[RMDB]
RNA sequence: GGGAACGACUCGAGUAGAGUCGAAAAGAUAUGGAGCAGAAUUGACAUGCGUCUCGGAAACGAGAUGGCAACAGCAAUCUGCUCCUAAGUCAAAAGAAAUAACGUUUGUUCGCAAACGUUAUUUCAACCAUGGCAGUACGUUCGCGUACUGCCAUGGAAAAGAAACAACAACAACAAC
Reactivity to DMS in 0.01 (KOAc 150mM, MgCl2 10mM, bicine 150mM(pH8.5), 24C), signal-to-noise 2, nucleotides 027 to 126: g000a030u000a300u000g000g010a000g000c010a000g000a070a060u000u000g000a120c060a220u000g000c000g020u000c000u000c000g020g000a130a030a080c000g000a010g000a010u000g030g020c000a030a070c300a090g020c010a000a000u000c000u000g000c000u010c000c020u000a010a030g000u000c020a120a080a150a120g000a000a000a000u000a000a020c000g000u000u000u000g000u000u010c280g020c000a000a020a010c000g010u000u010a010u000u000u000c000a080a110
The record gives the reactivity of an RNA of 177 nucleotides to DMS.
For DMS the reverse transcriptase was MarathonRT.